The record gives the reactivity of an RNA of 207 nucleotides to 2A3.
RNA sequence: GGGAACGACUCGAGUAGAGUCGAAAAACGACAACUACGCUCUGGCCGCUUAAGGCCUAAGCCUCGAAACCGCUUGUGUCCAUGCUCGCGGUGUAGAGUCACUAUCAUGGAAUCGCGCUGGGUGGCUGCCUGUCAGUCCGGCACUAGAACACAACAGGAGUUAUCUCAGGUUCGCCUGAGAUAACUCAAAAGAAACAACAACAACAAC
Reactivity to 2A3 in 0.01 (KOAc 150mM, MgCl2 10mM, bicine 150mM(pH8.5), 24C), signal-to-noise 2, nucleotides 027 to 156: a000c050g170a040c010a170a150c080u180a040c060g000c000u010c030u020g000g010c000c010g050c130u300u200a240a080g000g000c000c000u000a000a000g000c000c020u000c000g030a090a000a000c000c000g000c000u010u000g000u000g000u060c020c000a000u020g000c000u010c020g010c010g000g020u010g000u000a000g000a000g000u030c060a040c200u120a030u300c000a000u020g000g000a010a000u020c020g000c000g000c080u050g000g070g000u080g030g000c000u030g080c000c070u170g070u120c000a060g070u120c040c010g000g020c000a000c000u030a010g060a180a010c170a040c010a300a040c000a030g040